[RMDB]
RNA sequence: GGGAACGACUCGAGUAGAGUCGAAAAGCUUGAAAGGCUGAACCUUUCUUAUUGUAUUCAGCUGACAGAUAUCAAUCCACUCUCCAGCGCCACUGCUAUUGAGGAAUUGAACCUUAACGGUUGUCGCCCAGAAGUUGAGUUUCGACUCAACUUCUGGAAAAGAAACAACAACAACAAC
Reactivity to 2A3 in 0.01 (KOAc 150mM, MgCl2 10mM, bicine 150mM(pH8.5), 24C), signal-to-noise 4, nucleotides 027 to 126: g000c030u090u110g060a090a020a010g040g050c020u070g030a060a070c020c000u020u090u040c040u110u250a240u060u150g090u060a090u020u020c010a000g040c050u120g010a020c030a010g090a060u100a000u180c050a040a060u000c010c000a070c020u030c020u000c040c000a010g010c000g040c040c070a130c040u040g030c020u000a040u120u140g030a020g010g050a060a040u070u140g050a090a080c010c030u050u080a030a010c050g090g000u060u020g000u010c000g020c000
Reactivity to DMS in 0.01 (KOAc 150mM, MgCl2 10mM, bicine 150mM(pH8.5), 24C), signal-to-noise 2, nucleotides 027 to 126: g000c040u000u000g040a030a080a080g000g040c020u010g010a030a150c060c000u030u000u000c050u060u100a190u020u000g010u070a080u000u010c060a020g000c040u040g020a070c040a090g000a060u030a060u010c080a130a090u010c000c000a050c070u000c020u000c000c020a070g020c100g000c070c110a010c070u000g000c010u000a060u030u010g000a050g010g050a090a050u030u000g000a090a110c000c000u000u020a060a040c140g010g020u010u000g000u000c050g020c010
An RNA of 177 nucleotides, treated with 2A3 and DMS and read out base by base.
In probing experiments dimethyl sulfate is read out at A N1 and C N3, which are open when not base-paired.
The DMS profile rests on 1,822 reads.